The record gives the reactivity of an RNA of 177 nucleotides to 2A3. Reactivities are given for positions 27 through 126. The RNA was probed in 150 mM KOAc, 10 mM MgCl2 and 150 mM bicine (pH 8.5) at 24 C.

RNA sequence: GGGAACGACUCGAGUAGAGUCGAAAAGCCGCGCGAAUGCGGCCGGAAAAUUUAGCGCAGUAUAUCGGCCAGCAGCAUUUGCUGGCCGCAGGUAAGCCGUUGCCUCGCGCUAUUGAGGCCGGGCAUCAGUACUCGUCGUCUUCGGACGACGAGUACUAAAAGAAACAACAACAACAAC
Reactivity to 2A3 in 0.01 (KOAc 150mM, MgCl2 10mM, bicine 150mM(pH8.5), 24C), signal-to-noise 1, nucleotides 027 to 126: g020c000c000g050c000g000c050g280a250a030u140g000c010g000g010c020c000g000g010a090a060a260a260u000u000u000a090g000c050g010c010a040g060u060a110u000a010u300c000g000g010c000c000a000g000c030a010g030c040a270u150u140u190g000c000u040g000g000c000c000g000c020a000g010g000u010a030a030g120c120c110g040u000u040g040c000c000u020c020g000c010g000c030u000a000u040u010g060a010g030g010c010c010g050g000g010c010a060u080c040